The record gives the reactivity of an RNA of 207 nucleotides to 2A3 and DMS.
[RMDB]
RNA sequence: GGGAACGACUCGAGUAGAGUCGAAAAUCAGUUCACUUCGGUGAACUGAGCACACCGACCUUAGCUCAGUUGGUAGAGCGGAGGACUGUAGAUCCUUAGGUCACUGGUUCGAAUCCGGUAGGUCGGACCAACUAAGUUGCCCCUUCGGGGGCAACAACCACUACGACUAAUUCGUUAGUCGUAGUGGAAAAGAAACAACAACAACAAC
Reactivity to 2A3 in 0.01 (KOAc 150mM, MgCl2 10mM, bicine 150mM(pH8.5), 24C), signal-to-noise 2, nucleotides 027 to 156: u010c000a000g000u000u000c010a010c010u030u080c170g110g000u000g000a000a000c000u000g000a010g000c050a030c010a000c050c000g000a000c000c000u000u020a000g000c000u010c020a040g060u210u100g300g110u210a000g010a000g020c030g000g020a000g000g000a000c010u190g140u210a060g040a280u030c000c000u000u020a010g020g000u030c000a000c010u030g000g000u000u000c000g000a000a000u010c010c000g020g000u020a000g000g020u000c020g000g000a010c000c010a010a060c020u100a140a030g020u010u010g000c000c000c000c010u010u060c110g030g000g000g000g000c000a000a000c000a000a000
Reactivity to DMS in 0.01 (KOAc 150mM, MgCl2 10mM, bicine 150mM(pH8.5), 24C), signal-to-noise 1, nucleotides 027 to 156: u000c010a010g000u000u000c010a010c000u000u010c300g030g000u010g000a000a000c010u030g020a000g030c000a140c040a110c030c030g000a070c000c000u000u000a130g000c010u000c000a240g000u000u000g020g050u000a060g000a050g000c010g000g000a020g000g000a020c000u110g040u010a250g000a160u000c040c000u000u000a040g000g000u020c020a060c090u010g000g050u010u010c020g000a300a110u000c010c000g060g030u010a090g010g000u000c000g000g020a120c000c030a040a290c100u010a060a100g020u000u010g020c000c000c010c010u020u020c240g040g010g050g030g030c030a000a000c010a050a150
For 2A3, 1,942 sequencing reads were counted.